[RMDB]
This 177-nucleotide RNA was probed chemically with DMS. Reactivities are given for positions 27 through 126. The data come from the RNA Mapping Database (RMDB), library M2PK50. The reactions ran in a buffer of 150 mM KOAc, 10 mM MgCl2 and 150 mM bicine (pH 8.5), at 24 C. For DMS, 945 sequencing reads were counted.

RNA sequence: GGGAACGACUCGAGUAGAGUCGAAAACUCUGCAUAUUCGUAUGCAGAGAAAUAACGGUCGGCUCAUGCAGCUAGUCGAACUUGCUGCUCGACCUUUUGGUAAAAACCGGAGGUUCGCCUCCGGUAAAGAACGGACUUUAUUCGUAAAGUCCGUUCUAAAAGAAACAACAACAACAAC
Reactivity to DMS in 0.01 (KOAc 150mM, MgCl2 10mM, bicine 150mM(pH8.5), 24C), signal-to-noise 1, nucleotides 027 to 126: c010u000c000u020g020c000a040u000a010u010u010c190g030u000a000u000g010c000a000g000a020g000a010a080a040u000a110a030c160g000g010u010c000g040g010c130u030c130a040u020g010c010a020g030c000u000a050g040u000c200g040a080a300c000u000u000g000c000u000g000c000u010c020g010a020c000c000u000u000u000u030g010g010u000a090a030a040a060a030c000c040g030g010a010g010g010u000u010c230g020c010c000u010c010c010g020g010u000a000a030